[RMDB]
RNA sequence: GGGAACGACUCGAGUAGAGUCGAAAAGAAAACACAACCUUCAGCAAGUGUUUCUUAACUGACAAGAAGAACAGAGUCGUGGAACCCAGGCUCAGUAACAACGAAUGUUCGUGCACAUUUCGUGAAAUUUGUCUGCAUGAAGGAGUCACAUUUGAGACCAUUAGCCGGGAUUCGUCCCGGCUAAUGGAAAAGAAACAACAACAACAAC
Reactivity to 2A3 in 0.01 (KOAc 150mM, MgCl2 10mM, bicine 150mM(pH8.5), 24C), signal-to-noise 2, nucleotides 027 to 156: g000a000a090a000a040c040a000c000a000a150c030c040u300u300c040a040g060c010a160a210g030u010g000u000u020u040c000u040u000a150a090c070u160g000a020c040a060a080g160a030a050g070a050a030c030a040g000a010g010u000c030g010u030g010g050a000a030c000c000c000a000g000g000c000u020c040a050g100u180a030a040c080a010a010c060g100a080a070u070g020u100u030c040g030u030g000c040a000c000a040u040u070u100c160g030u110g100a070a080a040u000u030u030g030u010c010u020g000c010a020u010g030a060a020g120g020a060g060u070c020a030c020a130u050u150u130g020a060g000a070
This 207-nucleotide RNA was probed chemically with 2A3. The reactions ran in a buffer of 150 mM KOAc, 10 mM MgCl2 and 150 mM bicine (pH 8.5), at 24 C. The 2A3 profile rests on 488 reads.